RNA sequence: GGGAACGACUCGAGUAGAGUCGAAAAGAAAAAGAUCUCUUCCCGUAAAGGUAAGAUCUUGUUCGUUGGUACUAAACGCGCAGCAAGCGAAGCGGUAAAAGAAGCUGCCAACAACUGCGACCAGUUCUAGAUACUAACUUUUCGAAGUUAGUAUCUAAAAAGAAACAACAACAACAAC
Reactivity to DMS in 0.01 (KOAc 150mM, MgCl2 10mM, bicine 150mM(pH8.5), 24C), signal-to-noise 9, nucleotides 027 to 126: g010a030a050a080a020a010g000a010u000c010u000c120u000u000c060c000c020g010u010a080a120a150g000g010u010a060a030g000a010u000c000u000u000g010u000u000c090g000u000u000g000g000u010a070c090u010a060a070a080c110g010c030g010c030a050g020c070a080a150g020c060g010a110a200g000c020g010g010u010a070a070a090a150g010a120a160g010c060u000g010c010c020a080a050c030a080a060c020u000g010c040g000a080c070c040a100g000u000u000c080
Reactivity to 2A3 in 0.01 (KOAc 150mM, MgCl2 10mM, bicine 150mM(pH8.5), 24C), signal-to-noise 3, nucleotides 027 to 126: g030a010a060a010a000a000g010a010u020c030u020c000u100u080c000c010c030g020u120a110a120a050g020g000u040a010a020g000a010u000c000u010u030g040u030u030c060g020u030u040g030g000u020a040c020u100a050a150a070c040g020c020g010c050a070g020c060a190a100g050c050g100a060a010g010c010g010g060u150a150a170a020a000g080a090a030g010c060u000g010c020c000a020a010c010a000a010c020u070g020c040g040a060c000c020a010g020u080u030c040

An RNA of 177 nucleotides, treated with DMS and 2A3 and read out base by base. For 2A3 the reverse transcriptase was SuperScript II with manganese. The 2A3 profile rests on 5,184 reads. DMS adducts were read by reverse transcription with MarathonRT. Conditions: 150 mM KOAc, 10 mM MgCl2 and 150 mM bicine (pH 8.5), 24 C. The DMS profile rests on 15,478 reads.